[RMDB]
RNA sequence: GGGAACGACUCGAGUAGAGUCGAAAAAUGAGCUAGAUGUCGUCCUUGAUGCCGAUGUCAACUCGUCCAUGAGUCGGGUUGCGAUGGGCGGUCCACAAAAAAUGUUGCGUAUCUACGACGCGUCGAGCGUAUGGUAACGCUUCGGCGUUACCAUACGAAAAGAAACAACAACAACAAC
Reactivity to DMS in 0.01 (KOAc 150mM, MgCl2 10mM, bicine 150mM(pH8.5), 24C), signal-to-noise 5, nucleotides 027 to 126: a090u020g020a160g020c010u000a100g020a030u000g000u010c010g020u010c030c100u010u000g010a060u010g010c020c010g000a080u000g010u010c020a030a020c010u000c010g000u000c030c020a170u000g010a110g020u000c020g010g000g020u010u000g010c080g000a090u010g000g030g010c090g010g000u000c010c060a050c140a000a030a070a060a070a060u010g010u000u000g000c100g010u000a040u000c060u010a080c280g010a030c020g010c050g000u000c040g010a080g020
Reactivity to 2A3 in 0.01 (KOAc 150mM, MgCl2 10mM, bicine 150mM(pH8.5), 24C), signal-to-noise 4, nucleotides 027 to 126: a010u170g000a030g020c060u040a030g010a080u050g050u140c010g010u020c010c010u050u060g030a040u070g020c020c020g060a040u050g100u130c010a000a000c010u010c010g000u010c020c030a210u230g020a050g110u050c020g020g030g000u030u050g010c030g040a100u080g010g000g060c030g040g000u040c050c000a060c110a040a060a070a020a030a060u150g020u160u090g060c050g020u030a050u040c020u020a020c060g030a020c030g010c010g040u040c030g010a040g030
The record gives the reactivity of an RNA of 177 nucleotides to DMS and 2A3. For DMS the reverse transcriptase was MarathonRT. It was measured as part of the RMDB library OK2TST.